RNA sequence: GGGAACGACUCGAGUAGAGUCGAAAAACAGUACCGGUUGACCGUGGUGCCCGGCAGGAAGUCAUAGCCGAGCGCGACGGCGACGACACGGGCGAUGUUGAAACCGGACUCACCGCCUGGCAGGCCAAAAGUCAUACAUAUUCGUAUGUAUGACUUUAAAAGAAACAACAACAACAAC
Reactivity to 2A3 in 0.01 (KOAc 150mM, MgCl2 10mM, bicine 150mM(pH8.5), 24C), signal-to-noise 7, nucleotides 027 to 126: a000c060a020g040u100a170c010c010g020g010u030u040g110a170c000c010g020u050g110g020u040g020c000c010c010g020g000c030a060g110g190a240a070g140u190c080a110u140a060g000c010c000g010a020g000c030g000c020g070a010c000g010g010c010g020a020c020g020a000c020a010c030g070g000g000c060g040a090u090g040u080u070g060a080a030a020c030c000g020g030a040c010u020c030a050c020c010g020c000c010u020g070g010c050a040g020g050c010c010a030
Reactivity to DMS in 0.01 (KOAc 150mM, MgCl2 10mM, bicine 150mM(pH8.5), 24C), signal-to-noise 9, nucleotides 027 to 126: a080c130a080g010u000a080c010c010g000g000u000u000g000a170c040c020g010u010g010g040u000g010c010c010c000g010g000c040a140g020g010a140a130g010u010c150a100u010a190g010c000c000g010a050g000c010g020c010g010a040c010g000g000c040g010a100c090g000a040c030a060c030g000g000g010c030g000a100u000g010u000u000g010a090a090a070c030c020g000g000a090c040u000c090a100c050c050g010c030c010u000g000g010c070a070g000g010c040c100a070